[RMDB]
Chemical mapping of a 170-nucleotide RNA with 2A3 and DMS. The 2A3 profile rests on 1,347 reads. The reactions ran in a buffer of 150 mM KOAc, 10 mM MgCl2 and 150 mM bicine (pH 8.5), at 24 C.
RNA sequence: GGGAACGACUCGAGUAGAGUCGAAAAGUCGAGGGUGAACUAUUGGUGCAAGACUUACGCUUAAAUAAGCUCCUGCAUUGGUCUGAUCAAACCAUAUGCUACAAGGAUAGUGUGUUUUAUGUUGUAAUACAGUCAUCCUUCGGGAUGACUAAAAGAAACAACAACAACAAC
Reactivity to 2A3 in 0.01 (KOAc 150mM, MgCl2 10mM, bicine 150mM(pH8.5), 24C), signal-to-noise 1, nucleotides 027 to 129: g040u010c000g000a000g000g000g000u040g000a090a000c090u060a230u020u180g000g000u050g040c000a000a030g000a160c010u080u040a010c130g000c040u100u060a130a070a000u120a000a000g050c090u040c030c000u000g000c000a000u000u000g000g000u000c020u040g060a200u150c020a040a000a000c000c000a030u000a020u210g040c000u110a080c070a100a010g160g000a000u100a160g070u050g000u000g020u060u000u000u050a080u000g090u000u000g040u050a000a000u110a000c020
Reactivity to DMS in 0.01 (KOAc 150mM, MgCl2 10mM, bicine 150mM(pH8.5), 24C), signal-to-noise 5, nucleotides 027 to 129: g070u030c040g020a080g000g020g060u050g020a090a070c070u030a070u050u000g020g030u030g030c000a100a050g060a050c080u020u040a060c120g050c050u040u020a030a100a200u030a000a000g090c020u010c000c000u050g020c070a050u110u000g000g000u000c020u040g040a300u040c190a130a040a000c060c020a010u090a060u040g080c050u070a050c180a120a060g050g030a070u070a080g020u060g020u010g010u040u000u000u010a090u060g030u030u020g040u000a050a110u010a040c180